[RMDB]
RNA sequence: GGGAACGACUCGAGUAGAGUCGAAAAGCUCAAGCCUUCGUCACUCCAAACGUUUCGGCGAGAAGCAGGCCAUUAUCGCCGGCAUGGCGGCCGACGCGCUGGGCUGGCGUUCGCGACGCGAGGCUGGCGUUCCAUUUUGUUUCGACAAAAUGGAACGAAAAGAAACAACAACAACAAC
Reactivity to 2A3 in 0.01 (KOAc 150mM, MgCl2 10mM, bicine 150mM(pH8.5), 24C), signal-to-noise 9, nucleotides 027 to 126: g030c010u020c080a040a010g000c010c000u040u040c010g010u010c010a020c060u030c020c030a100a090a080c040g010u010u080u120c030g020g000c040g020a050g030a050a020g020c050a020g050g030c010c020a100u230u180a120u220c060g010c020c010g050g030c160a210u140g080g030c000g040g020c020c010g040a050c050g010c000g000c030u050g000g070g000c020u010g020g000c010g020u060u080c070g000c050g050a050c030g020c060g030a020g030g000c010u020g030g020
Reactivity to DMS in 0.01 (KOAc 150mM, MgCl2 10mM, bicine 150mM(pH8.5), 24C), signal-to-noise 9, nucleotides 027 to 126: g010c020u010c030a130a120g020c010c020u000u000c010g010u000c020a100c050u010c090c090a060a090a100c060g010u000u010u010c050g010g010c020g010a110g010a100a080g010c040a110g010g010c040c090a100u010u010a080u010c200g010c010c000g010g020c070a060u000g010g010c160g010g000c020c010g010a050c100g010c030g020c050u000g000g000g020c120u000g020g010c020g010u000u000c090g010c060g010a070c090g010c150g010a060g000g010c030u000g000g010